[RMDB]
RNA sequence: GGGAACGACUCGAGUAGAGUCGAAAACAUUAGGGUCAGUCUCCAGAUCAUUGCUUAUGCAAAGAUUGACCUGGUCUGGGAUUCCUCUCUUCUAUCCAGGAAAGAAACAUGGGUCAUAAAGAGUACCGCUCAAAGAAAGAUUCGUCUUUCUUUGAGCAAAAGAAACAACAACAACAAC
Reactivity to DMS in 0.01 (KOAc 150mM, MgCl2 10mM, bicine 150mM(pH8.5), 24C), signal-to-noise 5, nucleotides 027 to 126: c060a080u000u010a140g010g010g000u000c030a030g010u000c020u000c080c090a130g010a070u010c090a120u000u000g010c030u000u010a090u010g010c020a060a080a060g000a040u000u010g010a020c030c010u000g020g010u010c080u000g010g000g000a250u000u000c030c000u000c030u000c040u000u000c080u000a060u010c040c040a090g000g010a080a090a080g000a100a070a080c060a050u010g000g000g010u000c120a080u000a050a060a100g000a060g010u010a070c220c150
Reactivity to 2A3 in 0.01 (KOAc 150mM, MgCl2 10mM, bicine 150mM(pH8.5), 24C), signal-to-noise 5, nucleotides 027 to 126: c030a050u120u160a090g000g000g020u020c010a010g020u000c020u020c060c030a060g060a190u090c040a080u050u140g010c030u190u250a060u300g020c020a050a070a030g020a110u020u030g000a010c000c000u000g010g030u040c030u020g030g010g050a050u040u030c000c000u010c010u000c000u040u000c020u020a060u000c010c010a010g030g110a160a130a050g110a040a110a020c050a080u110g020g010g010u040c010a040u110a150a060a020g050a010g040u080a060c020c120